[RMDB]
Chemical mapping of a 177-nucleotide RNA with 2A3 and DMS. DMS (dimethyl sulfate) methylates the pairing face of unpaired adenines and cytosines. It was measured as part of the RMDB library M2PK50. The 2A3 profile rests on 3,324 reads.
RNA sequence: GGGAACGACUCGAGUAGAGUCGAAAACAUCAUCCCUUCGGGGAUGAUGAAAGAUCGAAAGAUCAGGCUUACCGUAAUAAGCCAAAAUACGAGCGAAACGCUAAAGACCUGUGUUCGCACAGGUCAAGCGUAGAACUGAGUUCGCUCAGUUCUACGCAAAAGAAACAACAACAACAAC
Reactivity to 2A3 in 0.01 (KOAc 150mM, MgCl2 10mM, bicine 150mM(pH8.5), 24C), signal-to-noise 2, nucleotides 027 to 126: c000a000u010c000a000u000c000c010c030u030u010c230g090g000g000g010a000u020g000a000u000g000a030a000a010g000a000u000c000g030a100a000a030g010a000u010c030a010g000g010c010u010u020a050c070c040g130u040a060a110u060a040a040g000c000c000a060a000a020a070u240a030c100g020a010g040c040g080a180a130a050c080g000c020u090a160a040a040g010a000c000c000u020g010u000g000u060u110c230g000c080a020c000a000g000g000u000c000a010a000
Reactivity to DMS in 0.01 (KOAc 150mM, MgCl2 10mM, bicine 150mM(pH8.5), 24C), signal-to-noise 2, nucleotides 027 to 126: c000a000u000c000a020u010c000c000c000u000u010c150g030g020g010g000a000u010g000a000u000g010a030a070a080g000a000u000c000g000a120a070a150g000a000u010c010a150g000g010c000u000u000a020c090c110g030u010a100a230u000a000a000g000c000c010a060a060a040a130u010a030c160g020a060g030c030g010a110a040a030c030g030c030u000a090a090a070g000a020c000c000u000g010u000g000u000u000c140g000c000a000c000a000g000g000u000c000a030a020